[RMDB]
RNA sequence: GGGAACGACUCGAGUAGAGUCGAAAAGAAUUUCAGCAGUUUUUAGUUACGGUCGCGCAAAUGGCUCGGACGGCACAGAUCGAGAACAAUGCUGCGUUGGCGAGCGCGGCCCGAGAUAAUACAAUGUCGACGACAAUGACAUCAUCAACGGCGACACGAUCUAUGGUAUGUUCGCAUACCAUAGAUCAAAAGAAACAACAACAACAAC
Reactivity to 2A3 in 0.01 (KOAc 150mM, MgCl2 10mM, bicine 150mM(pH8.5), 24C), signal-to-noise 6, nucleotides 027 to 156: g020a040a090u100u140u170c070a060g020c010a020g060u050u030u040u110u200a090g010u050u170a060c050g000g000u000c000g000c000g010c030a050a140a200u130g090g000c050u020c050g060g020a080c030g080g030c040a020c010a130g080a050u100c070g010a030g010a140a050c070a090a090u110g010c020u010g000c030g030u030u070g040g050c030g030a050g020c010g000c000g000g000c000c010c000g070a070g010a040u120a150a060u110a120c090a100a080u070g010u020c000g020a030c030g020a030c070a080a050u110g020a050c030a130u160c020a030u070c030a110a040c030g030g010c020g020a010c020a010c170
Reactivity to DMS in 0.01 (KOAc 150mM, MgCl2 10mM, bicine 150mM(pH8.5), 24C), signal-to-noise 2, nucleotides 027 to 156: g000a090a070u010u000u000c050a080g030c030a040g010u000u000u000u000u000a060g020u000u000a120c140g030g050u000c020g050c010g040c010a070a090a100u010g020g010c080u000c040g050g010a090c000g000g030c020a070c050a120g000a130u000c040g010a190g000a090a120c070a140a090u010g020c000u000g030c040g040u000u000g020g020c010g000a130g010c000g030c010g000g000c000c000c000g020a120g020a110u010a090a080u000a050c170a080a080u010g010u000c010g020a030c030g000a220c190a030a150u000g010a110c080a090u000c060a110u000c070a020a150c010g010g010c000g000a060c020a060c190